Record summary: The record gives the reactivity of an RNA of 177 nucleotides to DMS and 2A3. 2A3 adducts were read by reverse transcription with SuperScript II with manganese.

RNA sequence: GGGAACGACUCGAGUAGAGUCGAAAAGGACGUGGAGGGCCGUGAGCACGGGAUUGCCGUGCUGGAAUGUAAAGUACCCAACUCCCGCAUCCCCACGGCCUGGUUCCGUGAGGACCAGCGGCUGCUGAUCCUUCUUCACAUUCGUGUGAAGAAGGAUAAAAGAAACAACAACAACAAC
Reactivity to DMS in 0.01 (KOAc 150mM, MgCl2 10mM, bicine 150mM(pH8.5), 24C), signal-to-noise 6, nucleotides 027 to 126: g010g000a070c030g020u010g020g020a140g010g010g020c110c070g030u010g010a070g020c040a030c000g000g000g020a190u000u010g010c030c020g020u000g010c010u000g020g000a090a070u010g010u000a060a090a100g010u010a090c030c040c030a110a130c060u000c030c010c110g000c060a110u010c030c010c040c030a050c000g000g000c010c020u000g000g010u010u010c010c010g000u020g000a130g000g000a050c040c030a050g010c080g020g010c060u000g000c150u000g000
Reactivity to 2A3 in 0.01 (KOAc 150mM, MgCl2 10mM, bicine 150mM(pH8.5), 24C), signal-to-noise 3, nucleotides 027 to 126: g030g020a040c060g040u100g020g070a100g030g030g010c040c030g050u100g070a010g040c020a000c020g000g000g300a300u100u300g180c020c000g000u010g000c000u010g000g060a090a010u070g050u270a080a080a070g040u110a100c010c000c010a000a040c030u010c000c010c020g000c020a070u020c000c000c000c000a000c000g000g000c000c020u030g010g000u140u000c020c020g050u080g070a180g020g000a000c020c000a010g040c060g080g000c020u040g010c030u030g020